RNA sequence: GGGAACGACUCGAGUAGAGUCGAAAAACGAGUCCGUACGCGGACUCGAAGGGCCCCAGAAGACCAAGGGGCCCAAACCUACCACUCAUUAGAUGCAUGGAAAUCACUAGGUGAUACGUCACCUCGAACACGCUUUUAAGCUUCGGCUUAAAAGCAACUUUCCUUAAGCCUUCGGGCUUAAGGAAAGAAAAGAAACAACAACAACAAC
Reactivity to 2A3 in 0.01 (KOAc 150mM, MgCl2 10mM, bicine 150mM(pH8.5), 24C), signal-to-noise 1, nucleotides 027 to 156: a040c010g010a000g000u030c000c000g030u030a030c190g020c000g010g000a000c000u000c000g000a000a000g000g000g000c000c000c000c000a200g100a300a050g080a040c140c000a100a110g000g000g000g000c000c010c020a000a000a000c000c000u000a010c020c000a020c050u070c060a060u020u140a080g150a170u020g050c080a030u150g130g080a050a050a100u090c060a080c060u000a020g050g000u030g010a000u000a130c150g050u000c000a000c000c070u060c030g080a070a050c060a010c270g000c010u000u000u000u000a000a000g000c000u010u100c240g090g000c000u000u000a000a000a000a000g000c000a000a010